[RMDB]
RNA sequence: GGGAACGACUCGAGUAGAGUCGAAAAAGGUUUCGACGGGGAUUGGAAGCUAAGGUUGCAUGUCGGAGUGGGCAGGCUCCGUUAAAAAGCCCAUCUUAUACAAACGCCGAUACUGACGUUUCGUACGCACUGGCAGCUUAAGUCUGCCACGUCUCUAGUGCUAAAACUUCUUCGGAAGUUUUAGCACAAAAGAAACAACAACAACAAC
Reactivity to 2A3 in 0.01 (KOAc 150mM, MgCl2 10mM, bicine 150mM(pH8.5), 24C), signal-to-noise 1, nucleotides 027 to 156: a000g030g000u030u030u000c020g070a050c100g130g000g000g020a010u070u000g020g040a070a000g000c010u020a020a110g080g000u030u020g040c030a000u090g020u020c000g010g000a040g010u060g000g000g060c000a040g050g040c000u000c030c040g040u030u020a110a080a000a000a000g070c030c000c000a010u060c000u070u240a080u000a170c110a070a040a010c060g000c020c030g080a090u080a200c050u120g020a060c030g000u030u000u000c000g020u030a050c030g000c020a090c030u040g000g000c010a000g000c000u120u140a260a050g000u040c000u000g000c000c010a000c150g030u040c050u010c000u020a010
An RNA of 207 nucleotides, treated with 2A3 and read out base by base. The RNA was probed in 150 mM KOAc, 10 mM MgCl2 and 150 mM bicine (pH 8.5) at 24 C. Source: RMDB library RSTRND, as collected in RNAgym.